[RMDB]
Structure probing data (2A3 and DMS) for a 177-nucleotide construct.
2A3 adducts were read by reverse transcription with SuperScript II with manganese.
Values cover nucleotides 27 to 126.
For DMS, 3,535 sequencing reads were counted.

RNA sequence: GGGAACGACUCGAGUAGAGUCGAAAAGUGCCAGCCAGGGGCCCAUGGAGAAUCAGAUAUUCAGCCAGGGACAAGGGCAUGUCAGUGGGCAGAGUGCCAGGGUGUGGGAGGCUCUCUGGGUGGUCGCUCACUAUGGGAGAUUCGUCUCCCAUAGUGAAAAAGAAACAACAACAACAAC
Reactivity to 2A3 in 0.01 (KOAc 150mM, MgCl2 10mM, bicine 150mM(pH8.5), 24C), signal-to-noise 2, nucleotides 027 to 126: g040u010g000c010c010a020g110c030c000a010g040g000g040g000c020c080c010a060u090g080g020a100g050a070a070u090c080a080g120a210u120a080u250u090c040a020g120c020c010a000g120g000g020a020c030a060a040g030g000g030c030a030u020g040u030c010a040g100u170g030g040g000c020a040g030a010g140u110g020c010c000a030g020g020g050u260g010u100g040g060g010a080g000g000c000u000c000u050c000u070g020g000g050u010g000g000u090c010g000c010
Reactivity to DMS in 0.01 (KOAc 150mM, MgCl2 10mM, bicine 150mM(pH8.5), 24C), signal-to-noise 3, nucleotides 027 to 126: g020u010g020c020c020a030g000c030c010a040g020g020g010g010c010c010c080a130u010g010g020a170g000a080a050u000c130a130g010a070u010a100u010u000c070a110g020c040c020a080g010g000g020a080c110a090a080g010g010g010c020a050u000g000u000c070a090g020u000g000g000g020c060a060g010a110g010u010g010c020c020a070g010g000g020u000g020u000g020g000g010a140g000g010c030u000c010u020c020u010g000g010g010u000g010g000u000c030g000c090
Notes
For DMS the reverse transcriptase was MarathonRT. It was measured as part of the RMDB library OK2TRN.